An RNA of 177 nucleotides, treated with DMS and read out base by base. The reactions ran in a buffer of 150 mM KOAc, 10 mM MgCl2 and 150 mM bicine (pH 8.5), at 24 C. The data come from the RNA Mapping Database (RMDB), library M2PK90. DMS adducts were read by reverse transcription with MarathonRT. For DMS, 656 sequencing reads were counted.

[RMDB]
RNA sequence: GGGAACGACUCGAGUAGAGUCGAAAAAAAAACCUUGAUGUGUAGGAUAGGUGGGAGGCUUUGAAGUGUGGACGCCAGUCUGCAUGGAGCCGACCUUGAAAUACCACCCUUAAAAACUAAAAAAAAAUGUCAGAUAAUAGUUCGCUAUUAUCUGACAAAAAGAAACAACAACAACAAC
Reactivity to DMS in 0.01 (KOAc 150mM, MgCl2 10mM, bicine 150mM(pH8.5), 24C), signal-to-noise 1, nucleotides 027 to 126: a100a070a210a110a050c000c070u000u020g010a060u000g020u010g040u000a000g030g000a050u000a000g010g010u010g020g010g010a210g020g010c000u000u000u020g000a100a060g010u000g010u000g000g010a010c020g000c190c190a050g000u000c000u000g020c010a000u000g010g000a000g000c000c000g000a080c300c020u000u030g010a000a040a130u010a030c000c020a010c000c000c050u000u000a040a060a060a070a100c100u070a050a000a030a010a010a080a050a230a180